[RMDB]
RNA sequence: GGGAACGACUCGAGUAGAGUCGAAAACAAAUAUUAAUUACACAUGAGGCAAGCCUUUUUGAGUUCUGUAUGUCAUUUUGUAGAUUUUGAGUUCAUUCUAGUGGCACCAUUUGAGAUCAUUUUCAUGUAAUUAAAGGAACACAGCAACCUGGCACUGCAUGUGGCCUUAGUUCGCUAAGGCCACAUGAAAAGAAACAACAACAACAAC
Reactivity to DMS in 0.01 (KOAc 150mM, MgCl2 10mM, bicine 150mM(pH8.5), 24C), signal-to-noise 1, nucleotides 027 to 156: c030a080a070a150u000a130u000u000a010a110u000u010a050c030a000c080a110u020g010a100g050g000c070a110a190g000c060c060u010u000u010u000u020g000a140g060u000u010c020u010g040u000a060u000g040u000c020a150u000u000u000u030g050u010a130g010a130u000u010u000u000g010a150g000u000u000c050a080u000u000c000u000a110g040u000g030g000c020a050c020c020a110u010u000u000g000a060g010a050u030c030a090u000u000u020u000c010a070u010g070u000a020a030u020u000a030a040a120g000g030a080a100c020a020c060a070g000c020a040a090c060c020u020g030g050c080a060c080u000g000
Reactivity to 2A3 in 0.01 (KOAc 150mM, MgCl2 10mM, bicine 150mM(pH8.5), 24C), signal-to-noise 2, nucleotides 027 to 156: c010a000a080a040u200a040u200u180a180a040u090u170a050c070a010c020a030u060g010a040g020g000c040a060a030g000c000c000u100u210u100u160u200g040a030g000u060u000c040u010g110u100a040u110g030u060c030a060u010u080u120u190g070u080a060g030a100u050u130u080u110g060a060g000u070u040c030a040u060u000c060u070a010g080u030g070g000c010a000c010c010a070u060u050u170g050a060g000a030u040c040a090u050u050u080u100c060a040u090g050u100a120a090u100u090a060a030a030g030g000a040a040c040a000c000a040g040c000a020a000c020c050u010g040g000c030a030c090u030g020